[RMDB]
RNA sequence: GGGAACGACUCGAGUAGAGUCGAAAAUCGAUACCGCGCAGCUGUGUUCGCUGCUGUCUAGAGACGGCGUGAGUUCCUCCAUUGGUCACGGUGCCCUCAAGGGACUGACCGGCGUCGUCGUAGUGAACCUAGUCCCAGGAUUCGUCCUGGGACUAGGAAAAGAAACAACAACAACAAC
Reactivity to 2A3 in 0.01 (KOAc 150mM, MgCl2 10mM, bicine 150mM(pH8.5), 24C), signal-to-noise 2, nucleotides 027 to 126: u070c000g060a050u050a140c030c000g000c040g050c050a000g000c000u110g020u040g090u300u050c030g000c020u030g020c010u030g070u000c070u040a050g020a010g010a170c020g000g000c000g000u070g120a210g040u110u040c030c020u000c020c020a120u050u200g000g010u020c020a010c230g100g130u210g160c000c020c010u050c070a080a280g020g010g010a020c020u040g010a030c000c000g000g000c000g000u020c010g000u030c000g040u030a020g030u010g030a050a010
Reactivity to DMS in 0.01 (KOAc 150mM, MgCl2 10mM, bicine 150mM(pH8.5), 24C), signal-to-noise 4, nucleotides 027 to 126: u000c110g020a120u000a120c060c040g010c170g020c010a050g010c030u020g010u000g010u010u000c110g000c020u000g010c020u000g010u010c060u000a090g010a200g000a030c000g010g000c000g010u010g020a150g000u000u000c020c010u020c070c100a200u010u010g020g000u000c010a070c300g000g010u010g010c020c010c010u000c230a140a180g010g040g000a060c030u000g020a010c020c040g010g020c030g000u000c010g020u000c040g000u010a060g010u020g010a090a230